[RMDB]
RNA sequence: GGGAACGACUCGAGUAGAGUCGAAAACCACCGCAAUUCGUUGCGGUGGGAAGGUGCAAUUCGCUGACUGCACCACAGACGGCCAAUCCGUCAAAGCGAAAACUGGAGGGUCAUUCGUGACCCUCAAAACAAUAAGUGAAUUCGUUCACUUAUUGUUAAAAGAAACAACAACAACAAC
Reactivity to 2A3 in 0.01 (KOAc 150mM, MgCl2 10mM, bicine 150mM(pH8.5), 24C), signal-to-noise 4, nucleotides 027 to 126: c000c000a000c000c000g000c000a020a030u070u060c200g050u110u020g000c000g000g000u010g000g000g000a050a090g010g000u010g000c020a050a120u050u030c010g010c030u030g050a060c040u030g000c000a000c000c010a010c020a020g000a000c000g000g000c090c070a040a080u090c010c010g000u010c010a020a020a000g020c010g000a010a000a010a090c120u130g110g010a000g000g000g000u000c010a020u070u090c130g080u020g000a000c000c000c000u000c000a000a010
Reactivity to DMS in 0.01 (KOAc 150mM, MgCl2 10mM, bicine 150mM(pH8.5), 24C), signal-to-noise 9, nucleotides 027 to 126: c000c000a000c000c000g020c000a000a020u000u010c180g020u000u000g010c010g000g020u000g010g000g000a040a040g010g020u000g000c010a030a120u000u000c020g010c020u010g020a180c120u000g000c000a010c000c000a070c120a140g000a010c010g000g000c210c250a130a150u010c000c000g010u000c010a040a140a080g000c010g000a060a050a100a090c250u010g010g010a010g000g000g000u000c000a040u000u010c150g010u000g000a010c000c000c000u000c000a010a020
An RNA of 177 nucleotides, treated with 2A3 and DMS and read out base by base. Reactivities are given for positions 27 through 126. Source: RMDB library M2PK50, as collected in RNAgym. For 2A3, 36,250 sequencing reads were counted. The RNA was probed in 150 mM KOAc, 10 mM MgCl2 and 150 mM bicine (pH 8.5) at 24 C.